[RMDB]
Structure probing data (2A3 and DMS) for a 177-nucleotide construct. It was measured as part of the RMDB library OK1LIB. The reactions ran in a buffer of 150 mM KOAc, 10 mM MgCl2 and 150 mM bicine (pH 8.5), at 24 C. Values cover nucleotides 27 to 126.

RNA sequence: GGGAACGACUCGAGUAGAGUCGAAAAGAAAACCGCAGUUGGCUAGCGGAAAGAAAGAGGAUUAAGGCCAACGAAAUAAGUCGGAAAGCACGACCGACAAGAAAAGCCCUACAAUCGUGAAAGAAAACCAGCUAUAAUGAUUCGUCAUUAUAGCUGGAAAAGAAACAACAACAACAAC
Reactivity to 2A3 in 0.01 (KOAc 150mM, MgCl2 10mM, bicine 150mM(pH8.5), 24C), signal-to-noise 6, nucleotides 027 to 126: g050a010a070a020a000c030c000g000c030a010g000u020u010g040g000c030u060a140g010c040g050g080a040a060a020g140a020a060a020g150a040g110g030a060u150u170a050a050g030g010c010c000a000a010c000g020a000a050a120u220a120a050g020u010c010g010g000a270a080a010g050c010a010c010g000a000c010c000g010a000c020a020a000g070a030a050a010a000g060c020c000c000u050a070c090a070a070u060c010g010u000g030a140a070a020g100a010a110a020a020
Reactivity to DMS in 0.01 (KOAc 150mM, MgCl2 10mM, bicine 150mM(pH8.5), 24C), signal-to-noise 3, nucleotides 027 to 126: g000a100a080a080a120c040c030g030c100a150g000u010u000g000g000c010u000a120g000c030g000g000a030a110a070g000a030a080a080g000a140g000g000a100u000u030a080a090g020g000c010c010a020a020c030g010a070a080a060u040a040a100g000u000c020g010g000a070a070a130g000c100a010c070g010a100c010c010g010a020c000a110a130g020a070a090a050a140g000c000c000c010u010a080c180a060a040u020c060g010u020g010a110a060a060g010a090a040a110a100